[RMDB]
RNA sequence: GGGAACGACUCGAGUAGAGUCGAAAAGUAAUAGAUAACUGGAUGCAGCGUAGGGGGCAACGCAUAUCCAGUACGAAUGGUACCUGUAAAUAAAAUAUGCUCCCUAGUACAAGUACCAACAGAAGGAUAAGCGAUGGUGAUGUCAAUCACAUUUGCAUAUUACGUACGGAUUCGUCCGUACGUAAUAAAAAGAAACAACAACAACAAC
Reactivity to 2A3 in 0.01 (KOAc 150mM, MgCl2 10mM, bicine 150mM(pH8.5), 24C), signal-to-noise 8, nucleotides 027 to 156: g050u070a030a140u050a130g110a100u110a140a060c010u010g010g000a020u070g080c230a170g000c270g000u040a060g010g000g000g000g000c010a000a010c010g000c000a010u010a010u150c000c000a000g000u010a000c010g080a070a110u080g000g010u010a010c000c010u010g020u040a020a120a110u170a040a090a070a040u150a040u030g010c000u010c000c000c000u020a020g020u010a000c010a020a010g000u000a010c020c000a020a040c040a040g140a110a040g080g020a080u070a140a030g010c050g040a020u090g060g100u030g020a040u040g100u190c080a100a030u020c000a030c020a070u050u090u180g030c010a010
Reactivity to DMS in 0.01 (KOAc 150mM, MgCl2 10mM, bicine 150mM(pH8.5), 24C), signal-to-noise 3, nucleotides 027 to 156: g010u010a070a120u000a110g010a140u020a050a070c010u000g000g000a030u000g010c140a160g050c020g030u000a090g000g040g010g000g010c020a230a030c040g020c000a150u010a050u000c010c000a030g020u000a050c090g020a120a100u010g010g030u000a010c010c000u010g040u000a050a110a110u010a060a090a080a170u000a120u000g010c030u000c010c000c010u000a130g010u000a050c010a020a010g020u000a020c020c030a080a170c110a100g000a140a070g020g020a090u010a070a140g030c050g000a080u000g020g020u000g010a040u000g040u020c170a090a100u010c040a050c010a070u000u000u000g040c030a170
Structure probing data (2A3 and DMS) for a 207-nucleotide construct. DMS adducts were read by reverse transcription with MarathonRT. 2A3 adducts were read by reverse transcription with SuperScript II with manganese.